This 207-nucleotide RNA was probed chemically with DMS and 2A3. It was measured as part of the RMDB library OK3TST. Conditions: 150 mM KOAc, 10 mM MgCl2 and 150 mM bicine (pH 8.5), 24 C.
[RMDB]
RNA sequence: GGGAACGACUCGAGUAGAGUCGAAAACAUAACCGCGAGUCCUCUAUCAACGGUGAAUGGUAGAAUGGAAGCAUGUUACUACCAGCACAUUCUUUUGGGGCAUGAAGAUAUAAACCUCCCACAUCGCUCCGCUUGACAGGAUCUUGAAAGACGAGUCGAAGAUUACUUCAUUCGUGAAGUAAUCUUCAAAAGAAACAACAACAACAAC
Reactivity to DMS in 0.01 (KOAc 150mM, MgCl2 10mM, bicine 150mM(pH8.5), 24C), signal-to-noise 3, nucleotides 027 to 156: c040a100u000a060a070c030c020g000c060g000a120g010u000c020c030u000c040u030a090u000c020a060a020c020g010g040u000g010a080a150u000g010g020u010a030g020a080a070u020g010g010a130a110g010c010a090u000g000u010u010a090c080u000a110c050c030a140g000c100a080c020a100u000u000c020u010u000u000u000g000g010g050g000c100a080u000g020a050a050g010a120u000a100u000a100a100a100c100c000u000c000c000c080a070c040a070u000c040g010c040u010c020c020g000c050u000u000g020a090c070a060g000g000a130u010c040u000u010g000a090a080a090g020a110c020g010a130g030u000c080
Reactivity to 2A3 in 0.01 (KOAc 150mM, MgCl2 10mM, bicine 150mM(pH8.5), 24C), signal-to-noise 6, nucleotides 027 to 156: c010a040u150a060a050c030c020g030c030g030a020g070u030c020c010u030c080u100a060u030c020a040a030c030g030g010u040g040a080a070u050g030g000u010a010g030a040a030u060g050g080a190a070g050c080a110u070g050u090u090a150c070u070a040c020c020a010g000c020a000c000a030u050u060c010u060u100u030u050g000g000g020g000c050a020u170g070a110a070g100a040u140a030u120a230a180a070c010c040u030c000c020c000a010c000a020u040c050g000c050u010c000c010g050c100u010u030g010a010c020a030g010g010a000u040c020u040u080g080a110a070a030g060a050c070g020a010g050u080c040
2A3 adducts were read by reverse transcription with SuperScript II with manganese.